[RMDB]
RNA sequence: GGGAACGACUCGAGUAGAGUCGAAAAGCCGACUGCACGUGCGUGCGAGCAGUUUUCGAAAUCGCACGUUUCACGUAAAGUCCCAACUCUACUCGAUGCGAGGGUCAGCAAGCAAGCAGCAAUAAAAUACCGUAUCGAAAUUCGUUUCGAUACGGUAAAAAGAAACAACAACAACAAC
Reactivity to DMS in 0.01 (KOAc 150mM, MgCl2 10mM, bicine 150mM(pH8.5), 24C), signal-to-noise 3, nucleotides 027 to 126: g020c210c180g030a020c010u000g020c300a020c000g050u010g020c020g000u000g020c010g020a010g040c180a160g000u020u030u000u000c100g000a050a120a060u000c000g010c000a010c000g000u010u000u000c000a030c000g010u010a030a290a030g010u000c000c100c070a030a030c000u000c010u000a010c010u010c000g000a020u000g000c040g010a080g000g020g010u000c020a030g010c040a050a060g000c000a040a060g000c040a030g030c080a050a060u030a060a050a100a140
Reactivity to 2A3 in 0.01 (KOAc 150mM, MgCl2 10mM, bicine 150mM(pH8.5), 24C), signal-to-noise 2, nucleotides 027 to 126: g050c020c050g010a020c000u020g000c050a020c000g000u000g000c000g000u000g000c010g020a060g030c090a040g000u090u050u190u290c050g100a080a050a090u000c000g000c000a000c010g010u020u110u100c020a020c010g000u030a000a000a010g020u000c010c010c010a010a000c000u000c000u020a000c000u000c000g020a040u080g040c020g060a070g040g020g000u000c020a000g000c050a100a000g010c000a000a040g000c040a000g010c030a090a060u130a180a100a040a010